[RMDB]
RNA sequence: GGGAACGACUCGAGUAGAGUCGAAAAAGCUGGGUUUAGACCGUCGUGAGACAGGUCGGCUGCUAUCUAUUGGGGGUGUUUUGGUGCUUGACAGGAACGUUCGUAUAGUACGAGAGGAACUACGAACUAAGAGGAUCGAGUUCGCUCGAUCCUCUUAAAAAGAAACAACAACAACAAC
Reactivity to DMS in 0.01 (KOAc 150mM, MgCl2 10mM, bicine 150mM(pH8.5), 24C), signal-to-noise 1, nucleotides 027 to 126: a020g000c020u040g010g000g000u000u000u000a100g000a000c050c020g040u040c010g000u050g000a190g000a000c010a030g020g000u010c000g000g010c080u030g030c080u020a050u000c070u010a100u070u020g000g000g010g020g020u000g010u010u000u010u010g020g000u020g000c070u050u030g000a110c040a100g000g010a090a110c110g000u000u000c000g000u010a000u000a030g020u020a130c040g010a200g010a110g000g000a090a090c170u010a000c000g010a020a000c020